[RMDB]
Chemical mapping of a 207-nucleotide RNA with 2A3. The reactions ran in a buffer of 150 mM KOAc, 10 mM MgCl2 and 150 mM bicine (pH 8.5), at 24 C. It was measured as part of the RMDB library OK3TST. Reactivities are rounded to 0.1 and cut off at 0 and 3.
RNA sequence: GGGAACGACUCGAGUAGAGUCGAAAAUAAGUCGAUUUCGAGUAAGCUGCCUAGUGAUCUGGGGCUUGUGCUAGCAUCUGUAGGUGAUGUGCAACGUGAUAUGUUAAUUGGACUCAAGCUACCUACGCCAUAUAAUGAAUUUAUUGACUCGAUUGAAUGGAAUGGAUUGUUUCGACAAUCCAUUCCAAAAAGAAACAACAACAACAAC
Reactivity to 2A3 in 0.01 (KOAc 150mM, MgCl2 10mM, bicine 150mM(pH8.5), 24C), signal-to-noise 1, nucleotides 027 to 156: u300a070a020g140u050c020g070a010u000u060u000c020g000a000g050u040a070a070g020c020u030g020c020c000u060a080g070u080g100a110u120c120u070g000g000g000g000c120u160u070g000u070g050c130u090a130g010c020a040u130c080u080g110u100a000g000g020u010g020a020u030g000u100g000c080a040a000c100g100u110g020a040u060a080u140g050u060u080a030a010u180u250g080g000a000c010u010c220a000a000g020c000u020a120c000c000u000a020c020g050c000c000a060u120a000u030a120a140u090g070a020a020u220u120u090a160u000u250g070a000c030u050c030g000a050u000u240g020a000a000